RNA sequence: GGGAACGACUCGAGUAGAGUCGAAAAGAGAGACAGACAGACAGACCGAGUGUGGCACGUGUAGGGGGGAAGCUGGCGGAGAUUGGCAGUGUGAAGGGCUGCAACUAUGAAUCCUUCUACAACUGCAACGUGGUACGUAGUUCGCUACGUACCACGUAAAAGAAACAACAACAACAAC
Reactivity to 2A3 in 0.01 (KOAc 150mM, MgCl2 10mM, bicine 150mM(pH8.5), 24C), signal-to-noise 2, nucleotides 027 to 126: g100a000g010a000g000a000c050a020g040a040c020a000g080a000c000a020g020a010c000c020g000a070g010u150g020u070g040g030c030a010c150g030u100g040u100a080g000g040g000g000g000g050a000a020g020c060u050g000g040c070g010g010a020g000a040u020u070g060g000c000a010g010u020g000u000g080a010a050g000g000g050c020u190g040c080a030a000c100u160a110u200g010a000a050u000c000c000u000u000c020u080a010c040a210a010c000u000g040c040a020
Reactivity to DMS in 0.01 (KOAc 150mM, MgCl2 10mM, bicine 150mM(pH8.5), 24C), signal-to-noise 2, nucleotides 027 to 126: g010a150g000a040g000a080c100a090g000a040c030a100g000a090c100a070g030a090c130c080g000a070g020u050g000u010g010g000c060a100c090g040u000g020u050a060g040g010g000g000g000g000a100a030g010c040u000g000g000c020g000g000a110g000a140u020u020g020g020c040a000g000u010g000u020g010a000a010g000g000g000c080u000g000c120a020a050c260u050a140u010g000a120a200u010c000c030u000u040c010u020a010c050a050a070c000u000g000c040a100